An RNA of 207 nucleotides, treated with DMS and 2A3 and read out base by base. The DMS profile rests on 1,768 reads. For 2A3 the reverse transcriptase was SuperScript II with manganese. It was measured as part of the RMDB library M2RFPK. Values cover nucleotides 27 to 156.
RNA sequence: GGGAACGACUCGAGUAGAGUCGAAAAGUUAGGUGAAGCGGCUACACGAACAUAGGCCACUGACCCCGAACGUCGAGAGACGCCCCGGGUCAGGACAGCUCUUCCCGGCUUAAGGGUUGAGCCCAGGUAUCACCCUGGCUAUUCGUAGCCAGGGUAACUGUAUCAUCAAGUUCGCUUGAUGAUACAGAAAAGAAACAACAACAACAAC
Reactivity to DMS in 0.01 (KOAc 150mM, MgCl2 10mM, bicine 150mM(pH8.5), 24C), signal-to-noise 1, nucleotides 027 to 156: g020u010u010a070g030g030u000g020a040a050g010c090g050g050c000u020a120c050a140c020g020a090a050c080a110u010a110g050g000c000c000a120c000u010g000a020c100c000c000c060g020a040a030c000g020u010c010g010a300g010a300g010a050c010g010c000c080c060c240g000g000g000u000c000a030g000g010a040c040a040g000c020u000c000u010u000c050c000c040g040g060c110u010u000a100a200g010g000g010u000u000g020a130g010c010c010c010a260g000g010u000a140u000c100a100c000c000c000u010g010g010c000u000a000u000u000c200g020u000a010g000c000c000a010g000g050g020u000a000a050
Reactivity to 2A3 in 0.01 (KOAc 150mM, MgCl2 10mM, bicine 150mM(pH8.5), 24C), signal-to-noise 2, nucleotides 027 to 156: g080u050u080a060g040g020u110g050a070a000g010c070g070g000c030u090a020c090a060c120g120a220a010c060a150u200a120g040g020c030c020a030c010u010g010a010c000c010c070c050g020a040a020c000g000u000c000g020a070g010a010g000a120c020g040c000c020c000c030g030g000g000u000c000a000g000g030a020c030a010g000c010u020c000u000u040c010c000c010g000g020c050u130u150a140a170g060g000g000u010u050g050a030g040c000c010c000a070g080g000u150a050u270c020a000c000c000c000u000g000g000c000u020a020u020u100c270g070u040a000g020c000c010a000g000g000g000u010a000a020